RNA sequence: GGGAACGACUCGAGUAGAGUCGAAAAAGCCAAUCCUUCGGGAUUGGCUACAGCAACGAAGCAAAGCAACGAGUCAAGACGAGCAAAAGAUCGAGCAUGCUACACACCCCAUCUUCGGAUGGGGUAAUGGACCCAAUAUAUUCGUAUAUUGGGUCCAAAAAGAAACAACAACAACAAC
Reactivity to 2A3 in 0.01 (KOAc 150mM, MgCl2 10mM, bicine 150mM(pH8.5), 24C), signal-to-noise 1, nucleotides 027 to 126: a000g050c000c000a010a000u000c010c020u030u080c240g030g010g000a000u010u000g000g000c000u000a000c000a030g020c030a050a030c030g100a050a010g000c050a010a040a050g040c010a070a070c030g050a010g030u100c020a040a030g060a080c090g050a020g100c000a000a080a120a000g060a030u080c030g000a010g030c030a040u100g020c050u080a040c060a010c020a010c100c000c000c000a010u010c000u000u040c150g060g010a010u010g000g030g000g040u020a000a000
Reactivity to DMS in 0.01 (KOAc 150mM, MgCl2 10mM, bicine 150mM(pH8.5), 24C), signal-to-noise 3, nucleotides 027 to 126: a040g040c010c000a000a000u000c000c000u000u000c220g020g010g010a010u000u010g010g000c000u000a000c060a060g000c060a030a060c070g010a120a070g010c080a070a070a070g010c030a040a040c050g000a080g010u000c030a040a100g000a130c130g000a090g030c070a040a060a060a040g000a050u010c110g010a060g000c020a070u000g010c060u000a070c070a070c190a110c000c000c000c000a010u000c000u000u020c170g010g010a000u000g010g000g010g010u000a000a030